[RMDB]
RNA sequence: GGGAACGACUCGAGUAGAGUCGAAAAUCGUGAGAUGUGGUGCCUCACGCGCUCGAGGCGUCCGUGGUCAGAGAGACCACUGACGCAAAAACUCGAGCGCAAAUAAAACGCAUUACAUUUAGAAUAAGAUAUGCUAUAAUUUCGAUUAUAGCAUAUCAAAAGAAACAACAACAACAAC
Reactivity to 2A3 in 0.01 (KOAc 150mM, MgCl2 10mM, bicine 150mM(pH8.5), 24C), signal-to-noise 6, nucleotides 027 to 126: u140c040g010u060g070a050g000a030u140g010u000g010g010u000g000c010c000u060c020a060c090g000c000g000c000u000c000g000a000g000g000c000g000u000c000c000g000u000g000g000u000c030a040g110a050g020a030g000a300c000c000a000c000u000g000a000c000g000c000a050a080a040a040a050c000u000c000g000a000g000c000g000c000a000a000a000u090a000a050a010a010c070g000c000a000u000u030a010c000a010u060u100u150a170g080a200a120u170a190a020
Reactivity to DMS in 0.01 (KOAc 150mM, MgCl2 10mM, bicine 150mM(pH8.5), 24C), signal-to-noise 4, nucleotides 027 to 126: u030c040g000u040g010a080g010a030u000g010u000g000g000u000g000c030c060u030c150a080c100g000c000g020c000u010c000g000a010g010g020c010g010u020c000c070g000u000g010g020u000c000a170g010a190g000a210g010a000c020c000a010c000u000g000a010c000g000c010a070a010a040a080a300c000u000c000g000a010g010c000g000c000a000a040a080u020a070a030a090a170c300g000c000a000u000u000a030c020a060u020u000u010a090g000a090a100u030a060a150